[RMDB]
RNA sequence: GGGAACGACUCGAGUAGAGUCGAAAAGAUAUGGAUCAUCCUAGAUAACAUCUGCAGGGAGCAGGUAGCGUCGGAAACGACGCUACCUGCGAAGAACUGUGAUGUUAUCUAGGAUGAUCCUAAGUCAGUAUCUUAUUACGUUCGCGUAAUAAGAUACAAAAGAAACAACAACAACAAC
Reactivity to DMS in 0.01 (KOAc 150mM, MgCl2 10mM, bicine 150mM(pH8.5), 24C), signal-to-noise 1, nucleotides 027 to 126: g000a050u000a300u020g010g020a020u000c000a000u010c000c000u000a000g000a020u010a000a000c000a020u000c010u000g070c010a010g020g020g030a190g050c010a030g080g130u000a010g000c000g100u000c010g030g000a180a120a300c010g020a030c020g000c000u010a000c020c010u000g000c000g000a060a120g000a140a120c030u000g000u000g000a000u000g000u000u000a010u010c000u000a000g000g000a010u000g000a000u000c000c000u000a000a070g010u000c060a190